The record gives the reactivity of an RNA of 177 nucleotides to 2A3 and DMS. DMS adducts were read by reverse transcription with MarathonRT. It was measured as part of the RMDB library OK2TST. For DMS, 74,511 sequencing reads were counted. Reactivities are given for positions 27 through 126.

RNA sequence: GGGAACGACUCGAGUAGAGUCGAAAACGGUUUUCAUACUGAGUCUCAUGCGACUGUACGCGCUGUGUAGCAUAUGAGCGGUACUGGUCGAGGGUCGCUCGCUUUCGUUUGCCACUUGCGUGAAUAGGUUAUUGAGUUAAUUCGUUAACUCAAUAACAAAAGAAACAACAACAACAAC
Reactivity to 2A3 in 0.01 (KOAc 150mM, MgCl2 10mM, bicine 150mM(pH8.5), 24C), signal-to-noise 9, nucleotides 027 to 126: c020g020g040u040u040u130u130c100a080u150a170c020u050g040a020g080u010c010u000c030a070u190g040c030g050a040c030u030g020u060a030c050g020c000g000c220u010g030u020g050u180a050g060c050a060u080a070u280g070a020g000c010g020g010u030a090c020u090g080g040u060c030g030a050g020g020g010u030c030g000c010u020c020g020c040u050u110u080c050g060u030u060u070g070c020c000a040c030u070u130g020c030g040u050g040a090a070u120a140g090
Reactivity to DMS in 0.01 (KOAc 150mM, MgCl2 10mM, bicine 150mM(pH8.5), 24C), signal-to-noise 9, nucleotides 027 to 126: c060g010g000u010u000u010u010c150a100u010a060c040u000g010a110g010u000c020u000c040a110u010g010c050g010a100c020u000g010u000a030c030g010c020g020c020u000g010u010g020u000a100g010c130a100u000a080u010g000a020g010c010g010g000u000a030c030u010g020g010u010c050g010a100g010g010g010u000c040g010c020u000c020g010c120u000u000u000c090g010u000u000u000g010c020c020a070c080u000u000g010c060g010u000g010a080a080u000a080g010